RNA sequence: GGGAACGACUCGAGUAGAGUCGAAAAUCAGAUGGCCGCAUGGAUUCAGAGUUUGUCGGACGAUGACUACGGAACUCUUCUCCGAGGGUACAGAACUUCCGACGGUGUGUACUUCCUCAUCGCGGCUACCGUCCCCUACCUUCGGGUAGGGGACGGUAAAAGAAACAACAACAACAAC
Reactivity to 2A3 in 0.01 (KOAc 150mM, MgCl2 10mM, bicine 150mM(pH8.5), 24C), signal-to-noise 1, nucleotides 027 to 126: u060c060a080g160a190u080g100g010c030c000g000c060a080u180g000g000a000u020u010c120a000g000a070g010u000u000u240g230u150c010g000g000a140c030g070a080u220g010a010c020u140a070c160g070g000a060a030c070u000c030u210u000c000u000c030c080g010a070g100g050g000u000a000c000a000g180a050a000c000u120u050c050c010g070a040c000g060g020u120g000u000g000u190a030c150u110u150c010c030u030c000a100u150c120g020c000g000g000c000u000